Source information:
This 207-nucleotide RNA was probed chemically with DMS and 2A3. In probing experiments dimethyl sulfate is read out at A N1 and C N3, which are open when not base-paired.
RNA sequence: GGGAACGACUCGAGUAGAGUCGAAAAACAUAGGCCAUGCUUACGAGCAUGGCCUAUGACGAAUCUCAAGCAAUCAAGCAUUCUACUUCUAUUGCAACACUGAGGAGGUUACGAGCUCCUCAGUGAAAAAAGAGAGUAAUGUUCGCAUUACUCUCAACACUAUGGAUACGUUCGCGUAUCCAUAGUGAAAAGAAACAACAACAACAAC
Reactivity to DMS in 0.01 (KOAc 150mM, MgCl2 10mM, bicine 150mM(pH8.5), 24C), signal-to-noise 2, nucleotides 027 to 156: a170c000a010u000a000g010g020c000c000a010u000g060c000u000u000a120c260g010a170g000c010a000u010g010g000c010c020u000a000u000g000a100c080g020a080a150u000c070u000c050a130a100g010c090a080a050u000c120a070a090g020c080a090u000u010c090u010a030c040u010u000c050u000a130u010u020g000c000a200a260c030a000c020u000g000a010g000g020a010g000g000u000u010a300c230g010a220g000c000u000c000c000u000c010a000g040u000g000a000a010a040a110a050a050g010a030g000a010g040u000a010a010u000g050u020u010c240g050c000a030u020u010a020c020u000c000u000c000a000a030
Reactivity to 2A3 in 0.01 (KOAc 150mM, MgCl2 10mM, bicine 150mM(pH8.5), 24C), signal-to-noise 4, nucleotides 027 to 156: a000c000a000u000a000g000g000c010c010a000u000g010c010u140u050a110c280g080a020g000c000a010u000g000g010c010c000u000a000u000g000a000c010g040a040a060u010c000u010c040a040a060g010c000a010a070u100c010a010a050g010c020a180u170u080c050u120a080c040u070u050c030u120a050u020u050g000c020a060a020c000a010c000u000g000a000g010g020a010g030g070u170u130a110c150g070a090g050c000u000c000c000u000c000a000g000u000g000a010a000a000a000a000a000g010a000g000a000g000u010a000a000u010g020u060u110c130g000c080a000u000u000a000c000u000c000u000c010a000a000

It was measured as part of the RMDB library M2RFPK.
The RNA was probed in 150 mM KOAc, 10 mM MgCl2 and 150 mM bicine (pH 8.5) at 24 C.